[RMDB]
This 177-nucleotide RNA was probed chemically with 2A3 and DMS.
RNA sequence: GGGAACGACUCGAGUAGAGUCGAAAAGAUAUGGAUGACAUGGAGACGUGUAUCGGAAACGAUACCCGUCUAUGAAGUGUAUCCUAAGUCAAACCCGAUCCCUUCCCUUCGGGGAAGGGAUCGGGAACAUUAUACGAUAGUUCGCUAUCGUAUAAUGAAAAGAAACAACAACAACAAC
Reactivity to 2A3 in 0.01 (KOAc 150mM, MgCl2 10mM, bicine 150mM(pH8.5), 24C), signal-to-noise 1, nucleotides 027 to 126: g020a010u020a020u070g000g010a020u130g300a040c010a000u020g010g020a010g000a010c020g010u010g000u010a010u000c000g000g000a020a000a000c000g010a000u000a000c020c010c000g010u000c000u010a300u020g000a000a000g000u000g010u010a000u000c000c000u010a050a010g010u010c020a050a040a170c010c000c000g020a010u020c010c000c000u000u020c000c030c000u010u070c300g100g000g000g000a010a000g020g050g000a010u000c030g030g000g000a010a000
Reactivity to DMS in 0.01 (KOAc 150mM, MgCl2 10mM, bicine 150mM(pH8.5), 24C), signal-to-noise 2, nucleotides 027 to 126: g000a020u000a090u020g000g000a010u000g000a040c010a000u000g000g000a020g010a010c000g010u000g000u000a000u010c000g030g000a020a010a040c000g000a010u000a010c000c020c010g010u000c010u000a120u010g010a130a210g010u000g000u000a120u000c000c000u000a020a110g010u000c010a120a090a170c010c000c000g000a020u000c000c000c000u000u000c000c000c010u000u010c230g020g020g020g000a000a000g000g000g000a010u000c000g000g000g000a010a030
The data come from the RNA Mapping Database (RMDB), library TTRDEL.
Reactivities are given for positions 27 through 126.
For 2A3 the reverse transcriptase was SuperScript II with manganese.